[RMDB]
RNA sequence: GGGAACGACUCGAGUAGAGUCGAAAAGUGGAUUCACAGCGUGCUCGAGUCACAAGGUCUGAGAACAGGCCUCAUGGCUCAAGGGGGAGCUCGUCCACAAUGACCGACCGUGACACGUAGUGGGCACGCGCGAAACUACCUUCGGGUAGUUUCGCGCAAAAGAAACAACAACAACAAC
Reactivity to 2A3 in 0.01 (KOAc 150mM, MgCl2 10mM, bicine 150mM(pH8.5), 24C), signal-to-noise 1, nucleotides 027 to 126: g080u020g000g000a080u060u060c060a010c070a200g000c000g100u160g120c000u000c000g020a000g000u000c000a000c050a070a000g000g000u000c000u000g010a120g150a300a070c040a010g010g000c000c000u000c000a030u000g000g000c010u000c110a000a170g160g000g050g000g030a030g050c000u000c000g040u030c040c000a000c000a000a050u220g010a060c100c000g000a000c000c040g050u020g040a040c010a020c080g050u140a000g120u140g030g060g060c000a000c060
Notes
Chemical mapping of a 177-nucleotide RNA with 2A3. For 2A3, 567 sequencing reads were counted. 2A3 adducts were read by reverse transcription with SuperScript II with manganese. Reactivities are given for positions 27 through 126.